Chemical mapping of a 177-nucleotide RNA with 2A3 and DMS.
RNA sequence: GGGAACGACUCGAGUAGAGUCGAAAAGGUACAUAUAGGAUCAUACAUGGUACCGCGUACGUACCCAUGGCUAGAGUGAUCUGGUACACUAUCAUCUAGACAUGGAUGUCAUGCGUGAUCGAGCUAGAACCUGCCAUGUGUUCGCACAUGGCAGGUUAAAAGAAACAACAACAACAAC
Reactivity to 2A3 in 0.01 (KOAc 150mM, MgCl2 10mM, bicine 150mM(pH8.5), 24C), signal-to-noise 2, nucleotides 027 to 126: g000g000u040a000c020a010u190a050u110a200g120g050a030u040c000a000u040a160c040a050u020g020g000u010a010c000c000g000c020g010u040a010c040g020u040a010c010c000c010a000u000g020g000c010u010a010g020a090g100u060g040a040u040c200u100g010g120u110a040c150a040c050u040a030u000c000a010u000c000u010a000g000a010c000a000u010g000g000a040u130g050u020c020a030u080g000c010g040u000g020a000u030c040g050a040g000c050u160a070g040
Reactivity to DMS in 0.01 (KOAc 150mM, MgCl2 10mM, bicine 150mM(pH8.5), 24C), signal-to-noise 3, nucleotides 027 to 126: g000g020u000a020c020a160u010a160u010a090g020g010a040u000c040a030u000a110c170a030u000g000g030u000a010c010c020g000c110g020u010a060c120g010u020a030c040c000c000a000u000g000g010c000u000a010g000a060g010u010g000a020u000c200u010g000g000u020a120c130a120c070u000a020u000c000a060u000c000u000a020g000a010c020a010u000g000g000a060u010g010u000c040a040u000g000c030g010u000g010a000u000c010g020a170g010c130u020a100g020

Source information
For DMS the reverse transcriptase was MarathonRT. Values are in units of 0.01, from 0 to 300, in steps of 10. The RNA was probed in 150 mM KOAc, 10 mM MgCl2 and 150 mM bicine (pH 8.5) at 24 C.